[RMDB]
RNA sequence: GGGAACGACUCGAGUAGAGUCGAAAACCCCACCCUGGCGCUCACUCUUAGUAACACUUCCUAGUAGGUAUUAGGUGGUAAGCCGAGCUCUUCCUCGGUCUUGUUCUGAAUGCACACAUGUCUAGGGUCGGAAGCGCGAAUUCGUUCGCGCUUCCGAAAAAGAAACAACAACAACAAC
Reactivity to 2A3 in 0.01 (KOAc 150mM, MgCl2 10mM, bicine 150mM(pH8.5), 24C), signal-to-noise 1, nucleotides 027 to 126: c080c000c000c000a040c000c000c030u030g000g010c000g000c000u010c010a040c000u020c000u060u040a020g060u130a040a000c040a000c010u080u050c000c000u000a060g060u000a050g190g120u210a120u170u080a070g000g010u040g040g020u020a020a020g000c000c000g000a000g000c050u100c030u160u080c030c000u040c020g050g100u020c010u010u020g000u000u020c000u030g000a030a030u130g030c060a020c000a000c030a160u040g010u100c030u010a050g070g000g000
Chemical mapping of a 177-nucleotide RNA with 2A3. The RNA was probed in 150 mM KOAc, 10 mM MgCl2 and 150 mM bicine (pH 8.5) at 24 C. The 2A3 profile rests on 528 reads. Source: RMDB library RFM100, as collected in RNAgym. For 2A3 the reverse transcriptase was SuperScript II with manganese. Values cover nucleotides 27 to 126.